[RMDB]
Chemical mapping of a 207-nucleotide RNA with 2A3 and DMS.
The 2A3 profile rests on 1,013 reads.
The RNA was probed in 150 mM KOAc, 10 mM MgCl2 and 150 mM bicine (pH 8.5) at 24 C.
It was measured as part of the RMDB library M2RFPK.
The DMS profile rests on 2,769 reads.

RNA sequence: GGGAACGACUCGAGUAGAGUCGAAAAAGUGUAUGAAGUACGUAGAGUGUCGGCAAGCUCGAUAUAUGGACACUUACGAAGGGUUUUGGUUGUUUUGUAUCUCAAGCCGACUUUGAGUAUUUGAGGAAAAAGACUUACGCCUUCGGGCGUAAGUCAACAUAAAGACCACGUUCGCGUGGUCUUUAUGAAAAGAAACAACAACAACAAC
Reactivity to 2A3 in 0.01 (KOAc 150mM, MgCl2 10mM, bicine 150mM(pH8.5), 24C), signal-to-noise 2, nucleotides 027 to 156: a000g130u120g000u070a130u130g050a030a020g030u070a020c020g020u040a020g020a020g090u030g010u030c030g030g020c090a170a020g060c040u050c080g040a030u030a010u030a000u090g040g000a000c000a000c020u000u070a020c060g110a090a050g060g040g020u050u110u130u110g060g010u020u010g000u000u020u000u000g020u020a010u050c010u000c030a000a030g020c020c000g030a060c040u090u110u100g040a070g020u080a120u050u060u080g040a030g000g060a030a000a060a050a060g000a000c000u000u000a000c000g000c000c010u060u070c220g080g000g000c000g000u000a000a000g010u000c000a000a000
Reactivity to DMS in 0.01 (KOAc 150mM, MgCl2 10mM, bicine 150mM(pH8.5), 24C), signal-to-noise 1, nucleotides 027 to 156: a060g050u010g000u000a180u000g000a100a220g060u010a030c010g020u000a110g020a030g000u000g000u010c010g010g000c010a120a300g040c060u000c010g020a060u010a040u000a030u010g010g010a040c000a000c030u000u000a100c050g000a100a160g040g000g040u000u000u000u000g050g020u000u000g000u020u000u000u000g000u000a050u000c050u000c030a030a220g040c000c020g000a030c050u010u000u010g010a090g020u000a040u010u000u000g010a050g000g000a100a050a120a100a140g000a060c000u000u010a020c000g080c000c010u000u000c300g070g010g030c000g020u000a000a000g020u000c000a040a070